RNA sequence: GGGAACGACUCGAGUAGAGUCGAAAAAGGCUAUCUUCGACCCUGAAGGUUGCGUCGUUGAUAAUCAGGACACCUUCUUCAACAAGUGUCACCGGAUCCAGAUGGCCAAGGAGAGUGGUGCACUGUAUCGACGCGUUUUAUUCGUAAAACGCGUCGAAAAAGAAACAACAACAACAAC
Reactivity to DMS in 0.01 (KOAc 150mM, MgCl2 10mM, bicine 150mM(pH8.5), 24C), signal-to-noise 1, nucleotides 027 to 126: a090g000g040c030u000a010u020c030u010u010c100g050a050c020c000c050u050g000a020a050g030g050u010u020g000c090g020u000c030g030u000u000g000a120u010a050a060u030c040a010g010g010a200c110a010c040c020u000u000c020u000u000c060a120a290c200a140a050g000u000g040u000c000a060c020c070g040g020a180u000c180c020a080g000a040u000g020g000c010c000a070a170g000g000a000g000a100g050u000g020g000u000g000c270a010c000u000g000u000a140